[RMDB]
RNA sequence: GGGAACGACUCGAGUAGAGUCGAAAACACAGGAUCGUGUGGAAGUCCUGCUCGGGGCGGAAGCAUUAAAACCAUUCGAGCUAGUCAAUGCGUGGCGUGUCUCUCCGCAGCGUCUUGGCGAAUGUAACAAGCUGCCUCUCGUUCGCGAGAGGCAGAAGAACUUAUACAAGUUCGCUUGUAUAAGUUCAAAAGAAACAACAACAACAAC
Reactivity to DMS in 0.01 (KOAc 150mM, MgCl2 10mM, bicine 150mM(pH8.5), 24C), signal-to-noise 2, nucleotides 027 to 156: c030a060c020a120g030g020a100u000c090g020u000g000u010g000g010a300a160g000u000c000c030u000g020c040u000c030g010g020g020g000c030g030g040a130a220g040c040a140u010u010a080a110a180a150c030c010a130u000u000c000g010a120g010c040u000a110g010u000c020a060a080u010g010c010g040u010g030g030c020g070u010g000u010c030u000c020u000c120c040g040c000a070g000c120g040u000c100u020u000g040g000c010g010a090a000u010g010u000a090a110c110a070a130g000c010u000g000c000c000u000c000u000c020g030u000u010c300g000c010g020a030g000a030g010g000c020a010g000a020a080
Reactivity to 2A3 in 0.01 (KOAc 150mM, MgCl2 10mM, bicine 150mM(pH8.5), 24C), signal-to-noise 6, nucleotides 027 to 156: c030a010c010a010g230g050a260u230c110g030u030g010u010g030g020a070a020g010u000c000c020u020g010c040u030c020g010g000g010g000c030g020g040a030a000g060c040a030u080u230a050a040a030a070c040c010a030u070u100c040g020a010g030c060u090a030g050u010c010a010a020u030g020c020g030u020g050g000c030g040u100g070u030c070u020c020u020c120c010g000c010a010g000c000g020u010c000u020u010g020g000c000g020a040a050u090g030u110a090a130c070a120a050g020c000u010g000c000c000u000c000u000c000g020u050u060c170g000c010g110a000g000a000g000g010c000a000g000a000a000
Source information: Chemical mapping of a 207-nucleotide RNA with DMS and 2A3. DMS (dimethyl sulfate) methylates the pairing face of unpaired adenines and cytosines. For DMS, 4,837 sequencing reads were counted. The data come from the RNA Mapping Database (RMDB), library M2RFPK.